The record gives the reactivity of an RNA of 207 nucleotides to 2A3 and DMS.
The data come from the RNA Mapping Database (RMDB), library OK3TST.
2A3 adducts were read by reverse transcription with SuperScript II with manganese.
Reactivities are given for positions 27 through 156.
RNA sequence: GGGAACGACUCGAGUAGAGUCGAAAAGAGGACCGGCUCACACCUCGCGGCAAGGACCUGACAUCGCUGCCUCGGCCUCAGCUUCGGGAGGCGAGGACCCCAGAGACAGUUUGGCAGAAGAACUGGAACAAUUAUAAGUGCGUGUACAGGAUACAUGAGUUGCCUAUUAAUUCGUUAAUAGGCAACUAAAAGAAACAACAACAACAAC
Reactivity to 2A3 in 0.01 (KOAc 150mM, MgCl2 10mM, bicine 150mM(pH8.5), 24C), signal-to-noise 4, nucleotides 027 to 156: g070a020g000g020a050c030c050g050g020c020u030c030a050c000a040c020c010u030c020g050c050g030g000c060a080a130g070g030a080c010c010u030g000a010c010a050u110c120g000c030u060g020c010c000u030c020g290g050c010c000u010c020a080g020c060u140u140c060g120g030g000a010g000g020c010g000a000g010g000a020c000c000c010c050a060g030a010g020a080c000a010g010u020u050u070g080g000c070a050g030a210a010g010a020a010c000u010g030g050a050a050c050a050a110u180u150a080u090a210a020g050u040g030c010g010u020g010u010a080c010a030g000g060a050u050a110c060a050u090g040
Reactivity to DMS in 0.01 (KOAc 150mM, MgCl2 10mM, bicine 150mM(pH8.5), 24C), signal-to-noise 4, nucleotides 027 to 156: g000a050g020g000a100c110c030g000g030c040u010c020a090c050a130c060c000u000c030g030c050g030g060c010a080a120g010g000a120c020c000u010g010a060c050a110u000c090g040c060u010g000c010c000u010c030g030g010c000c010u000c030a130g000c120u010u000c070g030g000g000a080g000g010c020g000a040g020g000a080c050c020c060c040a160g020a110g030a100c030a050g040u000u000u010g000g010c040a100g000a130a130g000a070a080c020u010g030g000a070a110c060a060a090u000u000a090u000a040a070g020u000g020c020g040u010g030u000a080c070a090g040g020a300u010a050c030a080u000g000